An RNA of 207 nucleotides, treated with DMS and 2A3 and read out base by base. The RNA was probed in 150 mM KOAc, 10 mM MgCl2 and 150 mM bicine (pH 8.5) at 24 C. For DMS, 3,955 sequencing reads were counted. The 2A3 profile rests on 3,585 reads. It was measured as part of the RMDB library OK3TST.

RNA sequence: GGGAACGACUCGAGUAGAGUCGAAAAGAGGGUUGGUGGAGGAUGAUGAACCUGAUCAAAUAUCAAUGGUGAUCAGAUAUUAAGGAUAAGGGGUUUUGGUUAAACUGACUUAGCAGGGUUCUUUGCUAAAACUGGAUUUUACAAGGAAGUGCAUAGAGUUUGCUAUUGUAUUCGUACAAUAGCAAACAAAAGAAACAACAACAACAAC
Reactivity to DMS in 0.01 (KOAc 150mM, MgCl2 10mM, bicine 150mM(pH8.5), 24C), signal-to-noise 2, nucleotides 027 to 156: g030a120g000g000g030u000u010g010g000u010g020g020a140g000g000a100u010g010a180u010g000a080a070c020c020u000g020a050u010c010a070a090a120u000a300u010c100a060a130u000g030g030u010g040a040u000c010a100g000a040u000a070u000u010a080a090g020g000a130u020a070a140g010g000g020g000u000u000u000u000g020g010u000u000a060a060a100c040u010g010a050c020u000u010a150g010c010a040g000g010g020u000u000c010u000u000u000g020c040u000a010a010a040a130c020u000g000g000a300u000u000u000u010a040c030a020a080g000g010a010a060g020u000g010c040a090u000a100g010a200
Reactivity to 2A3 in 0.01 (KOAc 150mM, MgCl2 10mM, bicine 150mM(pH8.5), 24C), signal-to-noise 5, nucleotides 027 to 156: g080a010g020g030g000u110u090g010g020u070g020g050a070g040g000a040u080g010a020u040g030a050a050c020c000u010g020a010u010c030a040a080a070u180a080u140c120a090a100u170g140g000u030g030a000u010c000a000g030a020u090a050u100u140a100a020g060g000a060u070a120a070g020g000g020g020u040u070u140u080g020g000u020u120a060a030a030c020u020g030a010c020u050u060a020g000c000a000g000g000g000u010u000c000u020u040u070g050c040u040a000a020a040a050c010u000g010g000a000u020u030u010u010a010c000a010a000g000g000a000a010g020u010g020c010a010u000a040g040a000